[RMDB]
RNA sequence: GGGAACGACUCGAGUAGAGUCGAAAAACAAAUCGAUUCGUCGAUUUGUAAAAAACCUUUGUGCCAUUGUCAGUCUGCCACACCAACCCAUUGGGUUGUUGUGGGAGACUUGGAUUUAUGGCACUCUGGUAAAAAGCAACUUAUUCGUAAGUUGCAAGCUCAUGAAUUAGUUCGCUAAUUCAUGAGCAAAAGAAACAACAACAACAAC
Reactivity to 2A3 in 0.01 (KOAc 150mM, MgCl2 10mM, bicine 150mM(pH8.5), 24C), signal-to-noise 4, nucleotides 027 to 156: a000c000a000a010a010u000c000g000a000u050u080c190g040u000c000g130a000u000u010u010g010u040a110a020a040a000a000a000c000c000u000u010u010g000u000g000c000c000a000u010u000g010u020c010a000g000u000c010u070g230c020c000a000c000a010c020c010a010a010c000c010c110a300u170u300g000g000g000u000u000g010u000u000g000u000g000g000g000a000g010a000c000u000u040g000g000a000u080u250u270a010u000g000g000c000a000c000u000c000u000g010g010u090a090a120a030a020a000g000c000a000a010c000u020u020a030u110u180c300g120u090a020a000g000u000u000g000c010a000a010
Reactivity to DMS in 0.01 (KOAc 150mM, MgCl2 10mM, bicine 150mM(pH8.5), 24C), signal-to-noise 1, nucleotides 027 to 156: a050c020a000a010a000u010c000g010a060u000u000c290g000u010c010g030a000u000u010u010g000u000a000a000a080a120a030a040c020c000u010u000u000g030u010g020c030c010a020u000u010g020u010c010a090g010u000c000u010g030c000c010a000c000a040c030c000a000a040c000c010c020a290u010u000g090g020g020u000u000g020u020u000g050u010g010g010g010a000g010a030c000u010u010g030g030a070u000u000u000a010u000g000g030c010a020c000u010c030u010g010g060u000a020a060a050a170a170g040c000a000a010c010u010u000a080u000u000c230g020u020a010a070g040u000u000g020c010a040a040